[RMDB]
RNA sequence: GGGAACGACUCGAGUAGAGUCGAAAAGAUAUGGAGACUAUCCUGCCCUUCUUGGAUUUAUGGGUGAGGUACAUCGGAAACGAUGUAUGUAGCCCAUUGUCAGAAGGCAGGAUAGUCUCCUAAGUCAUCCCUAUUUGUAGUUCGCUACAAAUAGGGAAAAAGAAACAACAACAACAAC
Reactivity to DMS in 0.01 (KOAc 150mM, MgCl2 10mM, bicine 150mM(pH8.5), 24C), signal-to-noise 4, nucleotides 027 to 126: g000a040u000a300u010g000g000a010g000a020c000u000a000u000c000c000u010g020c160c050c020u000u000c000u010u020g030g010a030u000u010u000a010u000g010g010g020u000g010a170g020g000u000a000c000a000u000c010g020g010a180a140a260c010g010a020u000g010u000a010u000g000u000a300g000c000c000c000a000u000u000g010u000c000a020g000a010a020g000g010c020a000g000g000a000u000a000g000u000c000u000c000c000u000a000a060g000u000c030a150

This 177-nucleotide RNA was probed chemically with DMS. The RNA was probed in 150 mM KOAc, 10 mM MgCl2 and 150 mM bicine (pH 8.5) at 24 C. For DMS, 6,589 sequencing reads were counted. DMS adducts were read by reverse transcription with MarathonRT.